Overview: The data come from the RNA Mapping Database (RMDB), library TTRDES. An RNA of 177 nucleotides, treated with DMS and 2A3 and read out base by base. For DMS the reverse transcriptase was MarathonRT. For DMS, 4,361 sequencing reads were counted.
RNA sequence: GGGAACGACUCGAGUAGAGUCGAAAAGAUAUGGAAACCUCCUGCUUUUGACGAGAGUGGGAUCGGAAACGAUCCUACUUCUCGAUAAGCAGGAGUUUCCUAAGUCAAAACCCCGGUUCGCCGGGGACUUUGACUUAGGGUUCGCCCUAAGUCAAAGAAAAGAAACAACAACAACAAC
Reactivity to DMS in 0.01 (KOAc 150mM, MgCl2 10mM, bicine 150mM(pH8.5), 24C), signal-to-noise 4, nucleotides 027 to 126: g000a030u000a300u010g000g010a010a030a020c150c080u000c000c000u000g000c000u010u000u000u000g010a210c160g000a010g010a030g020u000g020g000g000a010u000c020g000g000a100a090a220c010g020a010u000c000c000u000a000c000u010u010c000u000c010g020a100u000a010a000g000c000a020g000g010a010g010u000u000u000c000c000u000a020a140g010u010c030a110a130a160a160c010c010c000c000g000g000u010u020c250g040c000c000g000g000g000g000a010
Reactivity to 2A3 in 0.01 (KOAc 150mM, MgCl2 10mM, bicine 150mM(pH8.5), 24C), signal-to-noise 2, nucleotides 027 to 126: g010a020u080a020u180g000g050a040a030a000c070c220u000c020c000u050g020c010u170u130u150u300g300a170c050g000a010g010a000g020u020g000g000g000a010u000c010g010g030a060a090a030c010g000a000u000c010c000u000a010c000u080u020c000u000c010g000a000u020a000a000g000c010a020g000g010a010g010u000u000u000c000c000u000a010a000g000u010c020a000a070a090a170c020c010c000c010g020g100u070u090c300g070c040c000g070g000g000g010a040